[RMDB]
RNA sequence: GGGAACGACUCGAGUAGAGUCGAAAACCGGGGAGCCGAGUGAGGCUUAUCCCGGAGUGCCGGGCAAGUCCCCCCAUGCCCGUUCCACGGCUCCCUUCCAGAAGGGCGGGGGUGGCCUGGAGCGUCGAAAGCUAACUGUUCGCAGUUAGCAAAAGAAACAACAACAACAAC
Reactivity to 2A3 in 0.01 (KOAc 150mM, MgCl2 10mM, bicine 150mM(pH8.5), 24C), signal-to-noise 9, nucleotides 027 to 129: c000c000g000g000g000g000a000g000c010c020g020a090g180u280g100a130g030g000c000u010u020a110u110c000c000c000g000g000a010g010u070g070c020c010g000g000g000c020a060a060g210u190c000c000c000c000c000c000a020u090g000c010c010c010g010u040u020c020c010a030c040g010g000c000u090c040c010c000u040u010c060c010a140g040a270a130g170g030g010c030g010g000g000g000g050u150g040g010c000c000u010g000g000a010g010c010g060u130c070g060a120a040a010
Reactivity to DMS in 0.01 (KOAc 150mM, MgCl2 10mM, bicine 150mM(pH8.5), 24C), signal-to-noise 9, nucleotides 027 to 129: c020c020g000g000g030g000a010g030c000c000g020a150g020u070g030a120g000g010c010u000u000a090u060c030c000c010g030g010a040g010u000g030c000c000g010g010g020c040a080a070g040u060c000c010c020c010c010c060a140u000g000c000c000c010g000u030u000c000c020a040c160g000g000c020u030c040c000c020u000u000c040c030a220g010a130a090g050g020g000c170g030g010g000g010g040u030g030g000c010c020u000g020g020a010g000c050g010u020c090g000a050a090a080